[RMDB]
The data come from the RNA Mapping Database (RMDB), library OK2TST.
The record gives the reactivity of an RNA of 177 nucleotides to DMS and 2A3.
For 2A3, 4,793 sequencing reads were counted.

RNA sequence: GGGAACGACUCGAGUAGAGUCGAAAACUGAUCCUGUCUUGGCUUUGGGACGUGGGGGCAGAAUAGGGGGCUGGAGGCAGGUGGGUUGCUGGUGACACAUGAGUGCUUGUCCUGGGUCUUCCCUGGGUCAACUGUGAAAAUUCGUUUUCACAGUUGAAAAAGAAACAACAACAACAAC
Reactivity to DMS in 0.01 (KOAc 150mM, MgCl2 10mM, bicine 150mM(pH8.5), 24C), signal-to-noise 5, nucleotides 027 to 126: c080u000g010a090u000c020c010u000g010u000c050u000u000g010g010c090u000u010u000g010g000g010a090c120g020u010g000g000g010g010g020c100a080g010a100a100u000a140g000g010g010g010g010c080u000g000g010a080g010g000c080a060g000g020u010g010g010g010u000u000g000c040u000g010g010u000g000a090c070a060c090a080u010g010a090g010u000g010c070u000u010g000u000c040c030u000g010g010g010u000c040u010u000c030c000c000u010g010g000g010
Reactivity to 2A3 in 0.01 (KOAc 150mM, MgCl2 10mM, bicine 150mM(pH8.5), 24C), signal-to-noise 3, nucleotides 027 to 126: c020u060g020a070u040c010c010u030g050u080c050u060u070g050g040c040u130u060u080g020g000g030a090c070g060u120g020g040g000g030g000c050a030g060a180a090u180a160g050g000g020g000g010c050u060g040g010a030g020g040c040a020g000g040u050g030g030g010u040u060g010c040u040g020g050u060g020a010c020a000c000a070u090g040a040g070u060g020c020u050u060g020u000c000c010u010g040g000g010u000c000u040u010c020c010c000u020g060g000g000

Annotation:
For DMS, 11,923 sequencing reads were counted.